Chemical mapping of a 177-nucleotide RNA with DMS. The DMS profile rests on 1,257 reads. The RNA was probed in 150 mM KOAc, 10 mM MgCl2 and 150 mM bicine (pH 8.5) at 24 C. DMS adducts were read by reverse transcription with MarathonRT.
[RMDB]
RNA sequence: GGGAACGACUCGAGUAGAGUCGAAAAGUGUUCUAUAGUCCGUGUUGAAGAACGGGCCAGGGAGUUGUGAUGGAUGGCGAGGCUAAUUCUAAAAGAAGCAGCCGUAGCGAAAGCGAUUACUCGCACAUGAAAUUUACGUCUUCGGACGUAAAUUUCAAAAAGAAACAACAACAACAAC
Reactivity to DMS in 0.01 (KOAc 150mM, MgCl2 10mM, bicine 150mM(pH8.5), 24C), signal-to-noise 1, nucleotides 027 to 126: g000u050g000u010u090c040u000a110u010a100g000u000c010c000g100u000g000u000u030g010a050a100g000a040a030c050g000g000g000c030c210a170g000g030g000a170g030u020u010g000u000g000a100u050g000g000a190u030g010g120c010g020a160g030g020c000u000a000a170u000u020c000u000a120a110a110a160g000a000a000g000c220a010g010c000c020g000u040a130g000c020g000a150a130a090g000c000g000a130u000u050a190c040u000c020g010c050a020c110a090